[RMDB]
Source information:
This 177-nucleotide RNA was probed chemically with 2A3 and DMS. For DMS the reverse transcriptase was MarathonRT. It was measured as part of the RMDB libraries RFM100 and RFMREP. DMS (dimethyl sulfate) methylates the pairing face of unpaired adenines and cytosines. Conditions: 150 mM KOAc, 10 mM MgCl2 and 150 mM bicine (pH 8.5), 24 C.

RNA sequence: GGGAACGACUCGAGUAGAGUCGAAAAAAUAGGGCGAAUUAGUUAGUGGGGGCAGACGCGAAACUUGGUGAUCUACCCAUGGCCAGGUUGAAGCGAAGGUAACACUUCGUGGAGGACCGAACCAGUUGUUACAUAAAGUAUUCGUACUUUAUGUAACAAAAGAAACAACAACAACAAC
Reactivity to 2A3 in 0.01 (KOAc 150mM, MgCl2 10mM, bicine 150mM(pH8.5), 24C), signal-to-noise 9, nucleotides 027 to 126: a000a000u230a030g020g000g010c040g050a040a090u160u030a090g090u050u030a040g020u070g020g020g000g000g010c020a010g010a040c020g010c020g070a080a050a050c040u040u060g040g010u050g060a100u010c010u050a060c010c010c030a040u040g010g000c010c030a010g000g000u000u030g010a020a000g000c000g000a000a000g010g000u020a040a010c040a010c050u000u000c000g000u020g000g010a050g030g110a010c000c000g000a000a010c000c000a020g020u030u020
Reactivity to DMS in 0.01 (KOAc 150mM, MgCl2 10mM, bicine 150mM(pH8.5), 24C), signal-to-noise 9, nucleotides 027 to 126: a060a060u010a060g000g000g010c040g010a070a070u020u020a070g010u010u010a090g030u010g000g010g000g010g010c050a030g000a060c060g000c040g000a070a070a050c080u000u000g000g010u000g020a070u010c080u010a130c020c010c030a100u010g010g010c000c010a290g000g000u000u000g000a300a220g000c000g000a010a000g010g000u010a110a110c180a170c000u000u000c000g010u000g000g000a210g010g000a020c010c010g000a140a160c010c010a070g010u000u010